RNA sequence: GGGAACGACUCGAGUAGAGUCGAAAAUGCGAAUAGCUUGGCCAUAGGAAGCUAUACGAUUAAACGUUUAAUCAACCAUACUACGGACGAUGAUGAUAACGAUGUGACCGAUGGCUAUAUUCAGGUAGGGUCCAGUACCAUUCGUGGUACUGGACCCAAAAGAAACAACAACAACAAC
Reactivity to 2A3 in 0.01 (KOAc 150mM, MgCl2 10mM, bicine 150mM(pH8.5), 24C), signal-to-noise 1, nucleotides 027 to 126: u180g030c040g030a060a050u080a060g140c060u040u150g070g060c000c010a040u080a090g120g000a130a010g030c000u040a080u020a160c040g020a070u000u170a110a130a000c040g000u000u110u050a020a000u010c000a050a040c020c030a040u080a280c150u090a050c100g130g050a030c110g070a070u120g000a000u020g000a050u030a260a000c030g060a040u150g000u010g050a000c000c000g000a010u010g010g000c000u020a030u000a000u070u010c000a000g160g010u080a010
Reactivity to DMS in 0.01 (KOAc 150mM, MgCl2 10mM, bicine 150mM(pH8.5), 24C), signal-to-noise 1, nucleotides 027 to 126: u000g010c090g000a090a000u000a030g060c210u000u000g030g030c050c030a000u000a150g010g190a070a250g000c010u000a060u000a150c190g000a090u000u030a050a090a140c100g000u000u000u000a050a010u000c040a060a300c010c060a060u000a110c160u000a100c280g040g000a110c230g000a040u030g000a030u000g010a010u000a040a050c010g040a140u000g050u000g030a110c130c000g000a000u000g000g010c030u000a030u000a040u000u000c060a050g010g000u000a030

Description
The record gives the reactivity of an RNA of 177 nucleotides to 2A3 and DMS. The data come from the RNA Mapping Database (RMDB), library OK2TST. The reactions ran in a buffer of 150 mM KOAc, 10 mM MgCl2 and 150 mM bicine (pH 8.5), at 24 C. Reactivities are rounded to 0.1 and cut off at 0 and 3.